An RNA of 177 nucleotides, treated with DMS and 2A3 and read out base by base. DMS adducts were read by reverse transcription with MarathonRT. For 2A3 the reverse transcriptase was SuperScript II with manganese. It was measured as part of the RMDB library M2PK50.
[RMDB]
RNA sequence: GGGAACGACUCGAGUAGAGUCGAAAACGCGUCCUGUUCGCAGGACGCGAAUUAAGGAAACCUUCCUGGUGGCGAGAAUAAAUGAGCUCUCGCGCUCAUAAAAUAGGUGGGCGUUCGCGCCCACCAAUAGGAACAUAUGGUUCGCCAUAUGUUCCUAAAAAGAAACAACAACAACAAC
Reactivity to DMS in 0.01 (KOAc 150mM, MgCl2 10mM, bicine 150mM(pH8.5), 24C), signal-to-noise 2, nucleotides 027 to 126: c020g030c040g010u000c000c000u010g010u000u040c220g020c000a020g000g000a000c030g000c000g010a010a020u000u000a100a080g010g000a060a070a140c060c040u000u000c000c020u010g000g030u010g010g000c030g010a030g010a060a080u000a030a160a090u010g010a100g000c040u000c050u000c070g030c110g000c000u010c070a050u000a050a060a070a070u000a080g010g030u000g000g000g000c020g000u000u000c170g020c010g000c000c000c000a000c010c000a010a020
Reactivity to 2A3 in 0.01 (KOAc 150mM, MgCl2 10mM, bicine 150mM(pH8.5), 24C), signal-to-noise 2, nucleotides 027 to 126: c010g000c000g000u000c000c010u040g050u070u060c250g050c050a000g020g000a000c000g000c000g000a010a010u100u060a070a020g020g010a000a060a050c000c020u020u000c010c010u050g010g000u050g100g010c030g020a020g020a050a070u130a190a130a180u180g050a080g040c010u010c030u030c020g060c000g000c010u070c040a130u270a130a210a060a070u190a080g000g000u000g000g000g000c010g010u050u040c200g000c000g030c060c000c000a000c000c000a000a000